[RMDB]
RNA sequence: GGGAACGACUCGAGUAGAGUCGAAAAAGAAUGCACCACAGCGUAAAAUCAUCUGAUUGGGUGAGUUGGUCGCACCGCCGUUUGACGAACGAACGCCAAGCCUAAGCCGUCUUUGUGCAUUAAGUGGAAAAGGAGCCCCAGUUCGCUGGGGCUCCAAUGGUAAUACGUGGUUCGCCACGUAUUACCAAAAAGAAACAACAACAACAAC
Reactivity to DMS in 0.01 (KOAc 150mM, MgCl2 10mM, bicine 150mM(pH8.5), 24C), signal-to-noise 1, nucleotides 027 to 156: a120g010a060a040u010g010c000a020c030c070a090c060a060g020c020g040u000a040a060a040a100u010c020a060u000c020u000g010a190u000u000g020g000g040u010g000a110g060u020u000g000g010u000c020g000c010a090c060c010g010c020c020g000u020u000u000g030a050c000g040a070a090c050g000a040a090c040g000c020c050a010a180g020c030c060u010a050a140g000c030c000g000u000c070u000u000u000g040u000g000c010a020u000u000a010a090g010u020g020g010a080a040a070a180g000g000a120g020c010c000c000c010a070g010u000u010c180g070c020u050g040g020g000g000c000u010c000c000a000a010
The record gives the reactivity of an RNA of 207 nucleotides to DMS.
The reactions ran in a buffer of 150 mM KOAc, 10 mM MgCl2 and 150 mM bicine (pH 8.5), at 24 C.
For DMS the reverse transcriptase was MarathonRT.